An RNA of 177 nucleotides, treated with DMS and 2A3 and read out base by base. For DMS, 27,424 sequencing reads were counted. For 2A3, 32,283 sequencing reads were counted.
RNA sequence: GGGAACGACUCGAGUAGAGUCGAAAAGAAAGCUACGAAAGUCGAAGUGGUUCGCCACGCAUCGAAAAACGACUCUUCGGAGUCGGCCUCCAGAUGCUCGACGAACAAGGAGGCAAAAGUAGCGAAAGGCAGCGAGGUUGUUCGCAGCCUCGUUGCCAAAAGAAACAACAACAACAAC
Reactivity to DMS in 0.01 (KOAc 150mM, MgCl2 10mM, bicine 150mM(pH8.5), 24C), signal-to-noise 9, nucleotides 027 to 126: g010a080a080a170g000c000u000a010c000g000a060a130a130g000u010c000g010a180a220g010u010g000g010u010u010c050g000c010c020a060c140g000c030a020u000c000g020a040a090a050a040a080c000g000a000c000u000c000u000u070c150g000g000a010g000u000c000g000g000c020c010u000c210c050a230g000a040u010g010c010u000c150g000a080c040g000a020a030c090a060a130g000g010a300g000g020c000a020a010a070a190g000u000a010g000c000g020a070a060a090
Reactivity to 2A3 in 0.01 (KOAc 150mM, MgCl2 10mM, bicine 150mM(pH8.5), 24C), signal-to-noise 9, nucleotides 027 to 126: g090a010a050a000g000c000u010a000c020g060a190a050a040g020u010c020g030a100a050g300u120g080g040u040u030c060g020c020c000a030c070g010c010a030u000c000g040a040a000a010a020a040c000g000a000c000u000c000u040u090c230g060g000a000g000u000c000g000g010c010c020u040c030c020a020g000a040u040g010c020u030c070g130a130c030g020a040a010c010a020a030g070g020a050g000g000c020a060a100a030a000g000u000a000g000c010g030a020a010a010